Source information:
The data come from the RNA Mapping Database (RMDB), library M2PK50. Chemical mapping of a 177-nucleotide RNA with 2A3 and DMS.

[RMDB]
RNA sequence: GGGAACGACUCGAGUAGAGUCGAAAAGCUCUAUCCUUCGGGAUAGAGCAAACGCUACGAUUGACGGUGAAGCCGGACCUGAGGUUCAGCAUAGUCGCGCUAAAAGUCACAUGUUCGCAUGUGACAAGCUGAAUAGUAACUUCGGUUACUAUUCAGCAAAAGAAACAACAACAACAAC
Reactivity to 2A3 in 0.01 (KOAc 150mM, MgCl2 10mM, bicine 150mM(pH8.5), 24C), signal-to-noise 4, nucleotides 027 to 126: g000c000u000c000u010a000u010c000c010u030u080c230g100g000g000a000u000a000g000a000g000c000a000a000a000c030g000c060u170a040c030g160a170u060u170g090a070c020g030g030u030g080a080a010g040c010c010g000g030a040c010c030u180g160a100g110g000u020u030c010a010g000c010a020u030a050g020u020c010g000c020g000c060u090a120a040a030a060g010u000c000a000c000a000u010g030u060u080c240g020c100a000u000g000u000g000a000c000a010a000
Reactivity to DMS in 0.01 (KOAc 150mM, MgCl2 10mM, bicine 150mM(pH8.5), 24C), signal-to-noise 4, nucleotides 027 to 126: g010c000u000c000u000a000u000c000c000u000u020c220g010g010g020a000u000a000g000a010g030c010a020a020a070c100g000c050u010a070c100g010a150u010u000g030a120c040g000g010u010g010a090a230g010c000c030g010g000a030c020c030u020g020a130g030g010u000u000c020a050g020c010a050u000a230g000u000c000g010c090g010c110u000a050a080a090a160g010u000c000a000c000a010u010g000u010u020c190g010c000a000u000g020u000g000a000c010a030a050